Source: RMDB library RFMREP, as collected in RNAgym. Chemical mapping of a 177-nucleotide RNA with 2A3 and DMS. The reactions ran in a buffer of 150 mM KOAc, 10 mM MgCl2 and 150 mM bicine (pH 8.5), at 24 C. For DMS the reverse transcriptase was MarathonRT.
RNA sequence: GGGAACGACUCGAGUAGAGUCGAAAACAAGCUACCAUCUGUAGGAUUAUGGCUGAACGCCUCUAAGUCAGAAUCCAUGCUGGAAUAGACGAUAAUCACCUUUCCCGAUGUGCCGCGAAUAGCGAUACUGUAACUUACGGUUCGCCGUAAGUUACAGAAAAGAAACAACAACAACAAC
Reactivity to 2A3 in 0.01 (KOAc 150mM, MgCl2 10mM, bicine 150mM(pH8.5), 24C), signal-to-noise 1, nucleotides 027 to 126: c050a040a060g040c010u040a020c010c020a050u060c020u080g130u170a090g010g000a010u030u040a040u060g020g000c010u020g020a080a010c080g010c010c020u000c000u060a020a020g020u010c020a000g010a020a000u000c010c020a050u040g000c010u010g080g000a110a120u050a070g060a020c070g010a040u030a100a090u090c030a080c020c010u000u060u040c020c000c010g020a060u130g060u060g080c020c010g050c030g050a120a080u130a150g050c030g010a010u030a040
Reactivity to DMS in 0.01 (KOAc 150mM, MgCl2 10mM, bicine 150mM(pH8.5), 24C), signal-to-noise 2, nucleotides 027 to 126: c070a140a100g020c050u000a070c040c030a050u010c040u000g010u010a130g010g000a030u000u000a030u000g000g000c000u000g020a150a150c170g010c060c000u000c020u000a130a050g020u010c000a060g000a030a050u000c010c040a070u000g000c050u000g010g010a110a050u010a060g010a100c070g000a070u010a090a080u020c050a050c070c070u000u000u000c000c000c010g010a110u000g010u010g000c050c000g020c020g000a080a070u020a070g010c030g020a110u000a060
Annotation:
For DMS, 1,593 sequencing reads were counted.